This 177-nucleotide RNA was probed chemically with 2A3 and DMS.
[RMDB]
RNA sequence: GGGAACGACUCGAGUAGAGUCGAAAAAAGGUGGCUCCAUCUUAGCCCUAGUCACGGCUAGCUGUGAAAGGUCCGUGAGCCGCUUGACUGCAGAGAGUGCUGUAACUGGCCUCUCUGCAGAUCAAGUCUUUAACCACUUUUUCGAAAGUGGUUAAAGAAAAGAAACAACAACAACAAC
Reactivity to 2A3 in 0.01 (KOAc 150mM, MgCl2 10mM, bicine 150mM(pH8.5), 24C), signal-to-noise 9, nucleotides 027 to 126: a000a000g070g000u080g010g020c140u220c200c010a100u060c060u110u140a030g010c000c000c000u000a000g000u010c000a000c010g010g000c010u010a020g010c140u090g040u040g230a120a100a060g010g000u010c000c000g010u010g000a010g010c000c000g000c000u000u000g000a000c000u000g000c000a000g000a000g000a000g020u300g010c000u020g030u120a150a110c110u150g020g000c000c000u000c000u000c000u000g000c000a000g000a000u000c000a000a000g000u000
Reactivity to DMS in 0.01 (KOAc 150mM, MgCl2 10mM, bicine 150mM(pH8.5), 24C), signal-to-noise 6, nucleotides 027 to 126: a060a040g000g020u010g010g000c130u050c170c020a060u020c060u010u010a090g000c010c010c010u000a020g000u010c000a010c020g000g000c030u000a020g010c150u020g000u010g010a080a080a060g030g010u000c000c000g000u000g010a020g020c010c010g010c000u000u000g000a000c000u000g000c000a000g000a020g000a020g010u040g040c000u010g010u010a120a110c300u100g010g000c000c000u000c000u000c000u000g000c010a000g000a030u000c000a000a010g000u000
Record summary: The data come from the RNA Mapping Database (RMDB), libraries RFM100 and RFMREP. Values cover nucleotides 27 to 126.